[RMDB]
RNA sequence: GGGAACGACUCGAGUAGAGUCGAAAAGAUAUGGAUCGGAUAGACAUGCGUGAUGUGUCGGAAACGACACAUACGCAACAGCUAUCUCGAUCCUAAGUCAAAAGUUUGUAGCUUCGGCUACAAACAAGACGUUUCUGAUGUUCGCAUCAGAAACGUCAAAAGAAACAACAACAACAAC
Reactivity to DMS in 0.01 (KOAc 150mM, MgCl2 10mM, bicine 150mM(pH8.5), 24C), signal-to-noise 1, nucleotides 027 to 126: g010a010u020a270u000g000g000a000u000c000g000g010a030u000a000g000a030c050a300u000g010c000g010u000g010a010u000g000u000g040u000c010g010g020a100a040a110c010g000a040c000a000c000a040u000a000c000g020c000a060a050c270a150g000c000u000a000u000c010u030c000g000a010u000c000c020u000a000a070g000u000c020a100a110a110a110g000u010u010u020g010u000a010g000c000u000u020c210g020g000c000u020a010c000a000a000a000c000a020a090
Reactivity to 2A3 in 0.01 (KOAc 150mM, MgCl2 10mM, bicine 150mM(pH8.5), 24C), signal-to-noise 1, nucleotides 027 to 126: g020a000u060a020u150g000g020a000u000c000g040g000a010u010a000g060a060c210a260u300g000c040g000u120g200a090u010g050u000g000u010c000g030g000a010a000a000c010g000a010c020a000c000a020u000a000c000g040c000a020a010c050a010g030c010u000a000u010c020u090c100g000a000u000c000c010u010a020a010g030u000c020a020a090a020a270g000u000u000u000g010u000a010g000c000u050u070c300g190g000c000u000a000c000a000a000a000c010a000a080